[RMDB]
RNA sequence: GGGAACGACUCGAGUAGAGUCGAAAAGUGUGCGGGUAUUUCGGGAACAUGGACCCGAUAGCCCGCGCUGAAUAGGCCCUGCUGGUCGCCGCGCCAGAAGGCGCCGUUGCCCAUGUCGCCGGUGAUGGGUAAUCAAGUGAUUCGUCACUUGAUUACCAAAAGAAACAACAACAACAAC
Reactivity to DMS in 0.01 (KOAc 150mM, MgCl2 10mM, bicine 150mM(pH8.5), 24C), signal-to-noise 4, nucleotides 027 to 126: g000u010g030u010g030c010g000g010g010u000a080u010u010u000c010g010g020g000a110a120c140a140u020g020g010a140c010c000c000g010a000u000a100g010c010c000c000g000c000g010c010u010g000a070a100u010a100g000g010c020c000c000u000g000c010u000g000g020u010c050g030c050c060g010c050g000c010c030a040g010a070a040g010g030c140g000c010c020g000u010u010g000c000c010c010a100u020g010u000c040g010c090c010g000g000u000g010a120u020g020
Reactivity to 2A3 in 0.01 (KOAc 150mM, MgCl2 10mM, bicine 150mM(pH8.5), 24C), signal-to-noise 9, nucleotides 027 to 126: g150u110g020u040g020c010g010g010g010u170a300u080u100u010c010g000g010g030a140a100c130a300u220g140g060a090c020c000c000g000a010u010a010g020c000c000c000g000c000g000c000u000g010a060a110u110a100g010g000c000c000c000u020g030c000u020g010g010u040c050g010c090c010g010c020g000c000c000a060g040a100a040g050g020c130g000c040c020g030u040u210g030c010c010c000a030u130g080u040c050g010c110c010g000g030u070g060a120u150g100